Description:
The data come from the RNA Mapping Database (RMDB), library OK3TST. Chemical mapping of a 207-nucleotide RNA with DMS and 2A3. The DMS profile rests on 2,804 reads. The RNA was probed in 150 mM KOAc, 10 mM MgCl2 and 150 mM bicine (pH 8.5) at 24 C.
RNA sequence: GGGAACGACUCGAGUAGAGUCGAAAAGGAGGUAACACAAAAUUUAAGUCCUCACAACAGUGAUUUUAUUAAAUUAGUUGCUUUAUAAAACAUUGCAGAUGUCAUAAUUGUUAACAUAACAAUUUACCAAACUGUAGUUAACUGGUGCAGUUUGCUACUAAUCAUAUCCUUUCGAGGAUAUGAUUAGAAAAGAAACAACAACAACAAC
Reactivity to DMS in 0.01 (KOAc 150mM, MgCl2 10mM, bicine 150mM(pH8.5), 24C), signal-to-noise 2, nucleotides 027 to 156: g020g020a060g020g020u000a050a050c040a300c050a080a090a120a160u000u010u000a110a160g030u000c010c010u020c050a120c060a090a060c040a060g020u000g030a100u010u000u030u020a060u020u000a050a030a080u010u010a120g030u000u000g000c010u000u010u020a050u010a050a050a060a120c060a070u010u000g020c010a040g010a040u000g000u010c010a040u000a070a030u000u000g010u000u000a050a060c080a100u020a130a060c030a020a060u000u010u010a120c060c040a040a030a110c010u000g010u000a050g010u020u010a050a130c160u000g030g030u010g010c020a100g010u000u000u000g010c070u000a150
Reactivity to 2A3 in 0.01 (KOAc 150mM, MgCl2 10mM, bicine 150mM(pH8.5), 24C), signal-to-noise 2, nucleotides 027 to 156: g080g030a020g020g040u130a130a020c060a010c040a120a110a100a130u080u120u060a080a040g040u050c010c000u020c000a060c010a080a080c000a030g050u030g060a070u080u120u070u250a140u100u170a050a060a080u060u080a050g070u070u040g000c010u090u070u010a030u060a050a180a030a020c040a060u040u000g000c010a000g010a040u030g040u020c040a030u080a200a030u040u030g010u020u030a080a070c040a100u150a080a000c010a060a060u030u110u080a110c030c010a020a010a010c010u020g010u010a060g060u060u110a080a100c070u140g110g000u040g040c000a000g000u000u010u000g000c000u030a050